An RNA of 207 nucleotides, treated with 2A3 and DMS and read out base by base.
For 2A3 the reverse transcriptase was SuperScript II with manganese.
Values cover nucleotides 27 to 156.
For 2A3, 557 sequencing reads were counted.
It was measured as part of the RMDB library OK3TST.
[RMDB]
RNA sequence: GGGAACGACUCGAGUAGAGUCGAAAACGGAGAGUCUUCGUCAAGUGCCGAGGUUGAAGAGCAUAGGACGAUUCGGGUUCUUGAAAUGGUUGAGGACUGGCUGCACCGAGGGCCAAGGGAAUUUUGUGUGAAGGUGCUCUGCCCCUACAUGCCAAAAUAAGUCCAAUACGUUCGCGUAUUGGACUUAAAAAGAAACAACAACAACAAC
Reactivity to 2A3 in 0.01 (KOAc 150mM, MgCl2 10mM, bicine 150mM(pH8.5), 24C), signal-to-noise 1, nucleotides 027 to 156: c170g020g020a000g020a010g010u060c010u030u070c040g080u020c020a120a000g030u000g030c070c050g080a070g000g140u100u130g050a070a020g040a060g010c010a040u020a110g120g090a020c000g030a060u040u080c040g020g000g000u100u090c000u030u070g010a040a050a050u100g110g000u050u050g020a000g020g010a010c090u060g010g000c020u060g000c040a050c010c020g000a010g030g100g000c000c020a000a030g010g030g020a060a060u070u130u060u130g120u040g020u010g060a000a020g000g000u010g000c000u000c060u160g070c020c010c000c000u020a030c020a030u050g020c020c040a000a190a000a060
Reactivity to DMS in 0.01 (KOAc 150mM, MgCl2 10mM, bicine 150mM(pH8.5), 24C), signal-to-noise 1, nucleotides 027 to 156: c060g040g010a120g000a050g050u000c010u010u000c060g060u000c030a130a110g100u000g030c020c000g060a100g020g060u000u000g010a080a150g080a170g000c040a080u000a170g020g020a120c000g040a110u010u000c090g000g000g030u020u000c020u010u000g000a050a070a100u040g000g000u000u000g000a090g020g020a110c010u000g050g020c040u000g040c030a120c040c070g020a150g020g000g050c000c040a040a040g000g000g020a060a090u000u000u000u000g040u000g060u000g000a150a120g000g060u010g000c000u020c050u020g010c020c020c000c000u000a140c050a110u000g030c000c050a060a110a080a250